[RMDB]
RNA sequence: GGGAACGACUCGAGUAGAGUCGAAAAAGCACAAAUGAUGAAUAACAAAGGGACUUAAUACUGAAACCAGAUGUUACAUUGUAGUGUGCUGAUGUGCUAAAGGUUACACACCUUCGGGUGUGUAACCGUUUCCAAUAACCUUCGGGUUAUUGGAAACAAAAGAAACAACAACAACAAC
Reactivity to 2A3 in 0.01 (KOAc 150mM, MgCl2 10mM, bicine 150mM(pH8.5), 24C), signal-to-noise 6, nucleotides 027 to 126: a000g010c010a010c010a010a040a010u070g010a000u010g020a130a270u040a030a000c020a030a050a030g020g010g070a020c030u140u180a110a080u150a300c090u140g130a130a040a040c010c000a030g020a150u080g020u000u010a000c010a010u000u020g020u030a100g130u000g010u010g050c010u030g010a110u110g070u060g040c050u110a160a120a110g020g000u010u010a000c000a000c000a000c000c000u020u070c160g120g000g010u000g000u000g000u000a000a000c000c000
Reactivity to DMS in 0.01 (KOAc 150mM, MgCl2 10mM, bicine 150mM(pH8.5), 24C), signal-to-noise 9, nucleotides 027 to 126: a020g010c000a010c010a060a120a090u000g000a010u000g000a210a130u000a010a010c010a020a220a250g020g000g010a120c110u010u010a070a120u010a150c260u010g010a100a080a100c010c010a040g010a300u000g000u000u000a030c000a010u000u000g010u000a070g020u000g010u000g000c000u000g000a110u000g020u000g010c120u010a060a090a080g010g010u000u000a000c000a000c000a010c000c000u000u010c200g020g010g020u000g000u000g000u000a000a000c000c000